[RMDB]
RNA sequence: GGGAACGACUCGAGUAGAGUCGAAAAGCACCAAGUUGAGAGAUGUCUUUGCUUACAACAUCCCAAGUGACACCACAGGUGAGUAUUGGGCUAUUUCUGCUCAUCCGAAUGGCGUUUCAACGGUAAUGAAUGGGCGUUAUAAAGGCCAACCUCUAAAAUCCUAUUUACGAUUCGUCGUAAAUAGGAUAAAAGAAACAACAACAACAAC
Reactivity to DMS in 0.01 (KOAc 150mM, MgCl2 10mM, bicine 150mM(pH8.5), 24C), signal-to-noise 4, nucleotides 027 to 156: g020c040a130c020c010a060a300g020u010u010g000a090g000a040g010a030u000g000u000c010u000u000u000g030c080u000u010a130c020a060a070c020a060u000c000c000c010a120a210g010u000g000a080c030a050c010c020a080c040a070g010g030u000g000a070g010u000a080u010u000g010g020g020c070u020a100u000u000u000c040u010g000c010u000c010a020u000c020c020g010a070a130u010g040g030c020g010u000u000u010c070a070a110c070g010g020u010a050a120u000g010a100a070u000g000g020g010c040g020u010u020a090u000a030a060a110g040g000c010c030a070a060c050c010u000c030u000a040a040a100
Reactivity to 2A3 in 0.01 (KOAc 150mM, MgCl2 10mM, bicine 150mM(pH8.5), 24C), signal-to-noise 7, nucleotides 027 to 156: g070c030a040c070c040a030a050g050u070u130g060a060g000a000g000a080u060g050u020c030u020u080u050g070c010u060u110a090c050a160a040c010a090u080c000c010c010a060a040g030u040g040a010c010a010c030c010a060c040a060g000g040u020g010a020g010u040a130u120u150g050g010g010c060u110a130u090u140u030c040u080g010c000u010c000a040u050c030c030g070a140a120u050g030g010c030g010u040u040u070c060a100a050c020g050g010u070a100a040u090g090a070a050u040g010g020g010c020g010u080u070a170u140a190a060a020g020g010c010c010a020a040c040c010u030c030u100a090a130a080

Conditions: 150 mM KOAc, 10 mM MgCl2 and 150 mM bicine (pH 8.5), 24 C.
The record gives the reactivity of an RNA of 207 nucleotides to DMS and 2A3.
High DMS reactivity at an A or C suggests that its Watson-Crick edge is free.
For 2A3 the reverse transcriptase was SuperScript II with manganese.